[RMDB]
RNA sequence: GGGAACGACUCGAGUAGAGUCGAAAAGCCAGGGGCUGGUGGUCAGCUUCUACACACCGGCCACCGACGGCGCGACGUUCACCGCAAUUGCCCAACGCUGCAACCAACAGUUCGGCGGCCGGUUCACCAGUCCUUCUAAGUUCGCUUAGAAGGACUGAAAAGAAACAACAACAACAAC
Reactivity to 2A3 in 0.01 (KOAc 150mM, MgCl2 10mM, bicine 150mM(pH8.5), 24C), signal-to-noise 3, nucleotides 027 to 126: g070c000c020a010g010g000g000g010c020u040g010g040u080g030g110u200c020a030g010c000u060u000c040u090a070c110a010c000a010c070c000g000g000c000c000a000c000c010g010a020c030g050g030c030g000c010g020a040c020g030u040u140c050a060c110c030g000c050a110a300u220u180g010c040c010c020a030a010c020g010c030u060g000c020a070a130c050c010a040a070c060a100g030u110u010c000g010g000c000g000g010c010c010g030g000u040u060c040a050c060
Reactivity to DMS in 0.01 (KOAc 150mM, MgCl2 10mM, bicine 150mM(pH8.5), 24C), signal-to-noise 4, nucleotides 027 to 126: g000c020c040a100g020g010g000g020c030u010g010g030u010g020g000u000c140a070g020c060u000u000c030u020a090c170a110c190a070c010c000g000g020c000c000a020c000c000g000a030c080g010g030c210g020c020g020a060c060g010u000u000c060a040c060c080g000c080a210a120u010u010g000c010c010c050a080a080c060g010c010u000g000c040a110a150c080c080a100a120c200a120g010u010u010c020g010g010c020g010g020c020c020g000g000u000u000c060a070c130